Conditions: 150 mM KOAc, 10 mM MgCl2 and 150 mM bicine (pH 8.5), 24 C. An RNA of 177 nucleotides, treated with 2A3 and DMS and read out base by base. DMS (dimethyl sulfate) methylates the pairing face of unpaired adenines and cytosines. The data come from the RNA Mapping Database (RMDB), library OK1LIB.

RNA sequence: GGGAACGACUCGAGUAGAGUCGAAAACAUUGCAGGAAGUAGACGAGCUCUGUUUAAGGCUACGGCAAAGAGCAAUAGAACAGACAACCGACCCUUUGUUAAAUUUAGCGGUGAUAGAGCCAUUAAACGCUCUCUUAUCGUUCGCGAUAAGAGAGCGAAAAGAAACAACAACAACAAC
Reactivity to 2A3 in 0.01 (KOAc 150mM, MgCl2 10mM, bicine 150mM(pH8.5), 24C), signal-to-noise 3, nucleotides 027 to 126: c030a030u040u220g020c050a030g120g000a150a030g170u140a040g000a040c040g080a040g000c010u000c000u010g090u030u100u130a030a010g080g000c040u050a040c060g040g040c050a020a120a020g070a000g010c000a000a090u130a100g060a070a000c020a020g080a090c080a060a000c000c000g040a100c090c040c080u050u050u000g030u030u030a110a200a290u060u100u040a010g060c050g010g000u010g040a060u090a200g020a020g040c010c000a070u130u100a060a040a020
Reactivity to DMS in 0.01 (KOAc 150mM, MgCl2 10mM, bicine 150mM(pH8.5), 24C), signal-to-noise 1, nucleotides 027 to 126: c020a040u000u000g020c000a120g020g040a020a130g010u000a040g020a000c000g000a180g040c040u000c050u040g000u000u000u020a110a180g000g000c000u000a110c090g000g030c210a070a070a030g020a040g000c060a040a040u000a090g010a040a040c050a070g040a160c120a080a000c010c060g000a180c040c070c050u030u000u130g000u000u000a040a100a130u040u040u000a010g000c050g000g010u040g010a110u010a070g000a040g050c040c030a040u000u040a000a090a130